The data come from the RNA Mapping Database (RMDB), library TTRDES.
This 177-nucleotide RNA was probed chemically with DMS and 2A3.
The reactions ran in a buffer of 150 mM KOAc, 10 mM MgCl2 and 150 mM bicine (pH 8.5), at 24 C.
The DMS profile rests on 10,703 reads.
For DMS the reverse transcriptase was MarathonRT.
The 2A3 profile rests on 24,048 reads.

RNA sequence: GGGAACGACUCGAGUAGAGUCGAAAAGAUAUGGACGUUAGGUGGGAGUCGGUGGUCGGAAACGACCAUCCGACGACGAUCACCGACGUCCUAAGUCAAACUAACAACAAGUUCGCUUGUUGUUAGACACUCUCAUAACGUUCGCGUUAUGAGAGUGAAAAGAAACAACAACAACAAC
Reactivity to DMS in 0.01 (KOAc 150mM, MgCl2 10mM, bicine 150mM(pH8.5), 24C), signal-to-noise 6, nucleotides 027 to 126: g000a050u010a180u010g000g010a020c000g000u000u000a060g080g010u000g000g010g010a140g020u000c000g010g050u000g010g000u010c000g010g010a030a040a100c000g010a020c010c010a010u020c000c000g030a000c010g000a060c300g000a160u000c010a020c010c000g000a020c010g000u000c000c000u000a000a060g000u000c020a150a140a300c010u000a000a010c000a010a000c000a010a010g010u000u020c300g030c000u000u000g010u010u000g000u000u000a000g000a300
Reactivity to 2A3 in 0.01 (KOAc 150mM, MgCl2 10mM, bicine 150mM(pH8.5), 24C), signal-to-noise 3, nucleotides 027 to 126: g010a020u030a030u090g000g000a000c000g020u040u090a300g000g020u010g030g090g060a180g010u010c010g020g000u000g010g020u000c000g000g000a030a050a020c000g020a000c020c000a030u070c040c010g000a000c000g000a030c020g020a040u020c000a000c000c010g000a000c000g000u000c000c000u000a030a000g000u000c020a070a060a150c000u010a010a000c000a000a000c000a000a010g010u050u110c280g130c280u000u000g000u010u000g000u000u000a000g010a020